[RMDB]
RNA sequence: GGGAACGACUCGAGUAGAGUCGAAAAGUUUAGUUUAAGUUAGUUUAGAGUAGGUAUAAAGAUGCCAGUGCCGGGGCCACGCGGAGUACGAUCGAGGGUACAGCACUAGGACGCCCAUUAGGGGAAGUCUUAGGGUGCUAUUCGUAGCACCCUAAGAAAAAGAAACAACAACAACAAC
Reactivity to DMS in 0.01 (KOAc 150mM, MgCl2 10mM, bicine 150mM(pH8.5), 24C), signal-to-noise 2, nucleotides 027 to 126: g030u010u010u000a070g010u000u010u000a020a120g010u020u000a060g020u000u010u000a080g010a090g000u010a050g030g010u020a060u000a010a030a020g020a260u010g000c010c020a000g010u000g020c000c020g030g000g000g000c040c010a020c020g030c000g000g000a150g020u070a020c040g010a090u030c030g000a080g000g000g010u010a010c000a030g000c010a030c010u000a130g010g000a050c030g000c020c000c020a180u020u020a130g000g000g000g000a040a090g000
Reactivity to 2A3 in 0.01 (KOAc 150mM, MgCl2 10mM, bicine 150mM(pH8.5), 24C), signal-to-noise 1, nucleotides 027 to 126: g020u060u260u240a060g000u000u130u060a020a050g040u050u060a090g000u000u010u070a020g010a020g000u060a030g110g030u040a050u020a110a130a030g090a040u260g000c000c010a010g000u000g010c000c000g000g010g020g000c050c000a000c020g030c000g000g000a010g000u300a000c000g050a140u060c030g050a100g000g020g000u030a040c000a000g000c040a030c000u000a040g020g000a010c000g010c000c000c000a020u010u210a070g000g000g000g000a030a050g060

An RNA of 177 nucleotides, treated with DMS and 2A3 and read out base by base. Values cover nucleotides 27 to 126. High 2A3 reactivity points to a flexible backbone, as in loops and unpaired stretches. The reactions ran in a buffer of 150 mM KOAc, 10 mM MgCl2 and 150 mM bicine (pH 8.5), at 24 C. For DMS the reverse transcriptase was MarathonRT.